[RMDB]
RNA sequence: GGGAACGACUCGAGUAGAGUCGAAAAUCCGACCGCUUCGGCGGUCGGAAAAGAAAGGGUGGGACACCGAUGGCAUACGGUGAAGAACGCAACAAUGCCAAAAAAUCCCUUUGUUCGCAAAGGGAAACUCGAUAUGUAACUUCGGUUACAUAUCGAGAAAAGAAACAACAACAACAAC
Reactivity to DMS in 0.01 (KOAc 150mM, MgCl2 10mM, bicine 150mM(pH8.5), 24C), signal-to-noise 1, nucleotides 027 to 126: u000c000c000g000a010c040c000g020c000u010u010c210g030g040c060g010g020u000c000g000g000a000a000a010a070g000a090a110a130g010g020g050u000g000g000g010a240c030a030c030c020g000a070u000g020g010c010a060u020a110c010g020g000u010g000a110a150g000a070a040c240g010c090a060a070c210a100a000u000g000c030c070a000a040a030a060a070a100u000c000c000c000u000u010u000g000u000u020c120g000c020a000a030a000g000g030g000a010a050a040

An RNA of 177 nucleotides, treated with DMS and read out base by base. The RNA was probed in 150 mM KOAc, 10 mM MgCl2 and 150 mM bicine (pH 8.5) at 24 C. For DMS, 756 sequencing reads were counted. DMS adducts were read by reverse transcription with MarathonRT. Reactivities are given for positions 27 through 126. Source: RMDB library M2PK50, as collected in RNAgym.